[RMDB]
An RNA of 177 nucleotides, treated with DMS and 2A3 and read out base by base. The data come from the RNA Mapping Database (RMDB), library OK2TRN.
RNA sequence: GGGAACGACUCGAGUAGAGUCGAAAAACACUUGGUGCAUCAUACACAUCUAGCCCUAAGCUGGGCGGUGGGACACGACUUGGCCGGUCGAUGUCGAAUGAAGAGAAGCGGCCACUAGAGUGGGGAGCCCUACGCAUGGGUUCGCCCAUGCGUAGGGAAAAGAAACAACAACAACAAC
Reactivity to DMS in 0.01 (KOAc 150mM, MgCl2 10mM, bicine 150mM(pH8.5), 24C), signal-to-noise 1, nucleotides 027 to 126: a060c040a150c050u010u010g080g000u000g000c070a060u000c070a040u000a210c130a090c010a010u020c050u020a090g020c000c000c010u010a090a120g050c170u000g030g010g040c020g000g030u000g010g000g030a040c030a030c020g010a010c010u000u000g020g030c020c040g010g040u000c030g000a110u000g010u000c010g020a070a080u010g020a100a100g000a190g010a060a130g010c050g010g000c040c000a120c140u000a050g010a210g020u010g020g010g000g020a100g000
Reactivity to 2A3 in 0.01 (KOAc 150mM, MgCl2 10mM, bicine 150mM(pH8.5), 24C), signal-to-noise 1, nucleotides 027 to 126: a000c040a010c010u020u080g050g060u030g070c000a000u030c010a020u160a040c030a000c000a070u040c020u050a040g040c000c020c020u070a210a060g090c060u060g000g000g050c050g020g010u030g030g000g000a000c010a000c000g030a030c000u080u100g020g050c010c020g010g030u050c010g140a190u040g000u020c000g070a090a300u210g010a110a040g080a010g000a130a010g090c030g030g010c000c000a020c030u060a030g090a050g020u060g000g040g000g090a000g030